[RMDB]
RNA sequence: GGGAACGACUCGAGUAGAGUCGAAAACUGCGCGAUGGACACGUCCUGGGCCGCGGUCGUGUCGCCGCCGGGGGCCGUCAGCUGCUCCUCCGGGGAGAUGGGGGGGUCGGACGCCCCGACGAUGGGCGAGCAGUUCAGGAUUCGUCCUGAACUGCUCAAAAGAAACAACAACAACAAC
Reactivity to DMS in 0.01 (KOAc 150mM, MgCl2 10mM, bicine 150mM(pH8.5), 24C), signal-to-noise 2, nucleotides 027 to 126: c000u020g010c080g010c010g020a070u010g020g000a020c020a030c060g030u010c010c020u010g000g000g010c070c050g050c250g010g010u010c060g030u020g000u040c020g010c040c010g030c060c030g020g030g000g000g010c100c010g030u000c020a120g000c180u010g000c010u020c020c010u020c000c020g020g040g000g010a120g020a080u020g000g000g000g000g000g010g010u000c210g000g000a030c000g000c030c030c000c050g020a000c000g020a120u050g000g040g000c100
Reactivity to 2A3 in 0.01 (KOAc 150mM, MgCl2 10mM, bicine 150mM(pH8.5), 24C), signal-to-noise 3, nucleotides 027 to 126: c040u070g000c030g000c020g100a090u180g150g000a000c010a000c040g030u030c010c010u070g040g060g050c030c020g050c020g000g020u010c020g020u010g010u030c010g010c030c000g020c000c030g000g000g000g010g030c120c010g000u010c030a030g110c080u150g000c000u010c000c000u000c000c010g030g010g080g050a170g030a150u230g010g000g000g000g000g010g000u090c030g010g000a000c010g030c000c000c000c000g000a000c010g020a030u130g040g060g030c040